An RNA of 177 nucleotides, treated with DMS and 2A3 and read out base by base. Values cover nucleotides 27 to 126. For DMS the reverse transcriptase was MarathonRT. 2A3 adducts were read by reverse transcription with SuperScript II with manganese. DMS (dimethyl sulfate) methylates the pairing face of unpaired adenines and cytosines.
[RMDB]
RNA sequence: GGGAACGACUCGAGUAGAGUCGAAAAUUAUGCGUAAAUAGCCAUCUGCAUAUCCAAUAGGUAACAAAGCUAUUGUAGUUGGGUCAGUAGCUGUAUAAGUUGCACCAUAACUUACAGACUCACCCGCAGGAAAUGUGUUUUUCGAAACACAUUUCCUAAAAGAAACAACAACAACAAC
Reactivity to DMS in 0.01 (KOAc 150mM, MgCl2 10mM, bicine 150mM(pH8.5), 24C), signal-to-noise 3, nucleotides 027 to 126: u000u010a030u000g000c010g020u010a050a070a060u000a030g010c030c040a070u000c040u000g020c010a030u000a080u000c070c000a070a020u000a030g000g010u000a070a090c190a090a080a080g000c020u000a010u000u000g010u010a100g000u020u000g030g000g030u010c100a030g010u000a040g000c030u010g000u010a100u010a050a040g010u020u000g020c120a140c180c130a070u010a010a020c020u000u000a010c060a070g000a050c040u000c270a090c000c000c020g010c190
Reactivity to 2A3 in 0.01 (KOAc 150mM, MgCl2 10mM, bicine 150mM(pH8.5), 24C), signal-to-noise 2, nucleotides 027 to 126: u130u030a030u070g020c010g000u040a070a030a110u070a180g090c020c020a050u000c030u080g000c010a010u000a040u090c010c020a010a080u040a110g000g080u100a100a070c040a090a170a040g050c020u040a020u060u080g040u050a130g060u080u190g010g000g000u020c020a010g020u060a050g020c000u020g020u040a080u000a160a040g000u000u020g000c030a050c050c000a030u030a110a020c000u000u000a010c010a040g020a140c010u010c010a020c000c040c020g000c040